[RMDB]
RNA sequence: GGGAACGACUCGAGUAGAGUCGAAAACAACAGGGAGCUUGGUGGUGGACGAGCCACUCGCCAACCGGGUCAGGUCCGGAAGGAAGCAGCCCUAACGAGCCAGGCACGGGUCGCCGUGCCAGUACAAUAUCGAACAAAUCUUCGGAUUUGUUCGAUAAAAAGAAACAACAACAACAAC
Reactivity to 2A3 in 0.01 (KOAc 150mM, MgCl2 10mM, bicine 150mM(pH8.5), 24C), signal-to-noise 1, nucleotides 027 to 126: c010a000a010c050a050g080g010g030a040g040c050u140u090g080g020u040g020g000u030g040g070a020c040g000a040g100c000c010a000c030u050c080g070c030c010a010a030c010c010g010g000g050u180c110a070g000g240u100c000c000g060g020a020a020g030g000a070a000g100c120a090g050c000c000c030u020a000a040c030g060a040g090c060c060a020g000g010c010a000c040g000g000g060u140c060g000c040c000g000u000g000c010c010a000g000u000a010c050a030a110
Reactivity to DMS in 0.01 (KOAc 150mM, MgCl2 10mM, bicine 150mM(pH8.5), 24C), signal-to-noise 2, nucleotides 027 to 126: c070a060a200c180a040g060g010g030a300g060c010u000u000g020g010u000g000g020u000g000g010a080c090g010a080g030c000c000a030c010u000c190g020c000c010a060a300c020c020g010g000g000u010c260a170g000g000u010c000c010g000g010a130a230g000g000a170a020g000c030a080g020c000c000c000u010a090a100c170g000a140g000c040c040a130g000g000c010a010c000g010g000g000u000c070g000c010c000g030u000g010c000c010a050g000u000a040c140a030a170